[RMDB]
RNA sequence: GGGAACGACUCGAGUAGAGUCGAAAAGAAGGUCGAGUGCACGACCAGAGAGUGCGGUGAGAGACCGACAAAGAGUUCGAAUCGGAACGAACGUCCGCAAACGAUCGACUGAAGAUCGAAGUGAGAACGAGUAGGAGCAGUUCGCUGCUCCUACUCGAAAAGAAACAACAACAACAAC
Reactivity to DMS in 0.01 (KOAc 150mM, MgCl2 10mM, bicine 150mM(pH8.5), 24C), signal-to-noise 2, nucleotides 027 to 126: g040a230a120g010g000u000c000g000a140g000u000g000c020a170c040g000a000c000c030a090g030a080g020a190g000u000g000c000g000g020u000g000a190g000a200g010a040c000c000g000a060c010a090a080a090g000a210g000u000u000c000g020a150a120u020c090g000g040a160a070c010g000a030a000c000g000u000c040c030g000c110a020a080a140c010g000a080u000c000g000a080c080u020g010a120a060g000a100u000c000g030a120a150g000u000g060a110g020a150a130
Reactivity to 2A3 in 0.01 (KOAc 150mM, MgCl2 10mM, bicine 150mM(pH8.5), 24C), signal-to-noise 3, nucleotides 027 to 126: g090a010a000g000g000u010c060g000a040g070u300g050c060a090c080g000a010c000c000a000g060a000g000a000g010u300g000c040g000g000u000g000a040g000a000g010a030c000c000g010a000c030a000a060a020g270a000g000u000u130c010g120a000a150u160c080g100g000a050a010c050g000a000a000c000g070u120c050c010g110c050a040a220a110c010g000a000u040c000g190a070c250u230g040a100a050g020a010u030c000g080a030a040g090u040g040a150g010a070a000